Structure probing data (DMS and 2A3) for a 177-nucleotide construct. DMS adducts were read by reverse transcription with MarathonRT. 2A3 adducts were read by reverse transcription with SuperScript II with manganese. Source: RMDB library TTRDEL, as collected in RNAgym.
[RMDB]
RNA sequence: GGGAACGACUCGAGUAGAGUCGAAAAGAUAUGGAGCCUGUGGAAUUCGCUCGGAAACGAGAACUACGAACCACGGGCUCCUAAGUCAAAACAUUAUUGUUUUCCCUUCGGGGAAAACAAUAAUGAACCAUACGCUAUAGUUCGCUAUAGCGUAUGGAAAAGAAACAACAACAACAAC
Reactivity to DMS in 0.01 (KOAc 150mM, MgCl2 10mM, bicine 150mM(pH8.5), 24C), signal-to-noise 3, nucleotides 027 to 126: g010a040u000a300u000g000g000a000g000c010c000u000g020u000g000g000a110a200u000u010c010g000c000u010c010g000g000a070a070a210c010g000a020g000a130a070c110u010a300c040g000a020a040c000c000a000c000g020g000g000c010u000c000c000u000a010a060g010u000c020a100a100a090a150c010a010u000u000a000u000u000g000u000u010u000u000c000c000c000u010u010c210g020g020g010g010a000a000a000a000c000a000a000u000a000a000u000g010a070a200
Reactivity to 2A3 in 0.01 (KOAc 150mM, MgCl2 10mM, bicine 150mM(pH8.5), 24C), signal-to-noise 3, nucleotides 027 to 126: g030a020u100a040u140g000g000a000g020c000c000u010g000u020g040g070a300a300u100u000c020g000c020u010c000g010g020a080a090a020c020g030a000g010a080a060c140u210a050c260g010a020a010c000c010a000c000g020g000g000c010u000c010c000u010a010a000g000u000c010a010a010a050a120c000a000u010u000a010u020u000g000u010u000u010u000c010c010c000u000u030c300g010g000g010g010a000a000a010a000c000a000a000u000a000a000u000g010a000a000